Description: An RNA of 207 nucleotides, treated with 2A3 and DMS and read out base by base. For DMS the reverse transcriptase was MarathonRT.
RNA sequence: GGGAACGACUCGAGUAGAGUCGAAAACCUGUCACCCGAGCGGGGGCUGAUGGAUGGAAGUUUCGCAUGAUACCGUCGGUCCAGUUCUCCUGCGUCGAUGGCGUGUCCGUUCUGAGCCUACAGUCGACAACGGCAUCUCCCUGACGGGAGGUGGUCGGAAGUUAAUUUUGUUCGCAAAAUUAACUUCAAAAGAAACAACAACAACAAC
Reactivity to 2A3 in 0.01 (KOAc 150mM, MgCl2 10mM, bicine 150mM(pH8.5), 24C), signal-to-noise 5, nucleotides 027 to 156: c010c000u000g060u050c050a040c020c040c030g050a030g030c090g020g020g000g000g000c040u020g020a070u070g060g040a010u030g020g050a050a120g080u060u100u170c080g010c090a060u120g030a080u150a120c000c000g020u000c020g030g010u040c020c010a020g010u110u080c080u030c040c010u040g010c060g090u030c020g010a030u030g030g000c030g030u050g020u000c030c020g020u100u000c040u070g040a040g030c010c050u100a090c050a070g030u110c030g040a030c040a120a040c020g030g000c000a000u000c000u000c000c000c030u110g120a050c130g010g000g000a010g000g010u020g020g090u060c020g020
Reactivity to DMS in 0.01 (KOAc 150mM, MgCl2 10mM, bicine 150mM(pH8.5), 24C), signal-to-noise 2, nucleotides 027 to 156: c020c030u020g000u000c030a040c000c010c000g020a130g010c060g000g000g030g060g040c060u000g020a170u000g000g000a090u000g020g010a130a120g020u010u000u000c070g030c080a140u010g020a120u000a030c030c020g020u000c000g000g020u000c040c030a080g020u000u000c030u010c060c000u000g010c090g000u000c010g000a100u000g010g000c020g020u000g030u000c030c040g010u000u000c040u000g000a140g010c020c000u010a070c050a100g020u000c040g000a080c030a070a210c030g000g000c020a010u000c010u010c000c010c000u010g030a170c300g000g000g010a010g010g050u010g000g010u000c060g000
Values are in units of 0.01, from 0 to 300, in steps of 10. The DMS profile rests on 4,665 reads.